[RMDB]
RNA sequence: GGGAACGACUCGAGUAGAGUCGAAAAAGAGGCGAUACGUCGCCUCAAGCUUGGUGCUUAGCUUCUUUCACCAAGCAUAUUACACGCGGAUAACCGCCAAAGGAGAAACACUGACUAUGGUCAGUGAGGAAGUUGGUUCGGUUCGCCGAACCAACAACUAUAAUAUACACUUCGGUGUAUAUUAUAGAAAAGAAACAACAACAACAAC
Reactivity to DMS in 0.01 (KOAc 150mM, MgCl2 10mM, bicine 150mM(pH8.5), 24C), signal-to-noise 2, nucleotides 027 to 156: a060g010a020g000g020c000g010a080u010a080c210g050u000c000g010c010c020u010c010a010a050g010c030u000u010g010g000u000g000c100u000u000a050g020c110u000u010c020u000u000u010c010a040c010c010a010a080g040c030a050u000a040u010u000a060c070a090c050g000c020g000g010a180u010a120a170c000c020g060c010c070a030a110a070g010g010a100g000a170a160a090c010a010c010u010g010a030c000u000a120u000g050g000u000c010a010g010u000g000a100g010g020a050a140g010u010u000g000g010u000u000c000g010g060u000u000c300g000c010c000g010a000a000c020c000a010a010c000a020a110
Reactivity to 2A3 in 0.01 (KOAc 150mM, MgCl2 10mM, bicine 150mM(pH8.5), 24C), signal-to-noise 5, nucleotides 027 to 156: a000g000a000g000g010c000g000a000u030a060c170g110u010c000g010c000c000u000c000a000a010g000c000u000u000g000g000u010g000c030u030u040a050g070c000u040u020c000u000u030u010c000a000c000c000a010a000g010c010a000u050a020u040u170a070c070a020c010g010c010g000g030a060u070a300a300c020c000g010c030c020a030a030a010g030g010a020g000a030a100a010c000a000c000u000g010a010c020u100a110u260g170g000u010c010a000g010u020g010a010g040g040a090a110g000u000u000g010g000u000u000c000g020g020u000u060c190g000c070c000g010a000a000c000c000a000a000c000a000a000